The record gives the reactivity of an RNA of 177 nucleotides to DMS and 2A3. Conditions: 150 mM KOAc, 10 mM MgCl2 and 150 mM bicine (pH 8.5), 24 C. DMS adducts were read by reverse transcription with MarathonRT. 2A3 adducts were read by reverse transcription with SuperScript II with manganese. The DMS profile rests on 15,692 reads.
RNA sequence: GGGAACGACUCGAGUAGAGUCGAAAAGGCAACGAGGAUAGCGUUGCCACGAUCAUUGCUGAGGCGGGGUUUGACACCAAAGUCGAAGACGAUAUCACUGACCACCCGAUUCAUGCGGGAGCGGGAGCUCCGCCUUCAAAUUCGUUUGAAGGCGGAGAAAAGAAACAACAACAACAAC
Reactivity to DMS in 0.01 (KOAc 150mM, MgCl2 10mM, bicine 150mM(pH8.5), 24C), signal-to-noise 9, nucleotides 027 to 126: g000g010c010a010a010c010g010a140g020g020a140u010a080g010c010g020u000u000g000c000c010a040c130g010a080u010c100a070u000u000g010c050u000g000a120g020g020c050g010g000g000g000u000u010u000g010a100c090a090c070c060a060a080a130g020u000c040g000a100a080g010a070c070g000a070u010a090u000c050a090c090u000g010a110c030c040a110c010c000c020g000a090u010u010c150a070u000g000c070g000g010g010a050g000c080g000g000g000a140g000
Reactivity to 2A3 in 0.01 (KOAc 150mM, MgCl2 10mM, bicine 150mM(pH8.5), 24C), signal-to-noise 8, nucleotides 027 to 126: g000g010c010a010a000c010g020a040g220g110a220u160a120g110c000g010u000u000g000c000c010a000c010g000a010u080c060a050u040u150g000c030u030g030a010g060g000c030g000g060g020g000u010u090u160g070a050c040a010c030c030a080a120a020g030u030c020g040a050a020g060a030c030g020a020u020a020u120c040a040c100u060g050a100c010c000a060c030c010c010g040a070u140u150c080a050u300g040c030g010g030g010a020g090c080g010g010g000a020g030